RNA sequence: GGGAACGACUCGAGUAGAGUCGAAAAUCGGGACACAUCAGCAGCGCGCCGAGCUUGUCGGUCACGGCCGGGAAGCAGAGCGCGUACUGCAGUGGCGUUCCAUCCGGGACCAAAAAGCUGGGGGCGACUUAGGUCGACCCUUCGGGGUCGACCUAAGAAAAGAAACAACAACAACAAC
Reactivity to 2A3 in 0.01 (KOAc 150mM, MgCl2 10mM, bicine 150mM(pH8.5), 24C), signal-to-noise 2, nucleotides 027 to 126: u050c000g000g020g000a020c040a000c000a040u080c070a060g020c020a000g040c010g000c000g020c010c000g000a010g000c000u210u100g300u260c010g000g030u000c010a040c180g100g000c030c010g000g000g020a000a000g020c000a000g030a000g010c000g000c000g000u020a010c000u020g000c060a010g020u020g020g030c080g000u060u000c010c010a000u020c000c020g000g070g090a050c020c080a140a040a000a000a060g020c080u060g010g030g010g080g060c020g000a020
Reactivity to DMS in 0.01 (KOAc 150mM, MgCl2 10mM, bicine 150mM(pH8.5), 24C), signal-to-noise 1, nucleotides 027 to 126: u020c210g000g020g000a030c000a000c000a070u010c090a060g020c000a050g000c000g000c000g040c010c000g010a300g000c000u010u000g030u000c000g020g120u010c040a160c300g000g050c010c000g050g000g000a000a030g040c000a010g010a090g010c000g010c000g070u000a060c170u010g000c000a070g000u000g000g000c220g040u000u000c000c000a180u000c060c030g000g020g000a090c010c040a000a070a060a100a040g000c100u000g000g000g020g030g000c080g010a170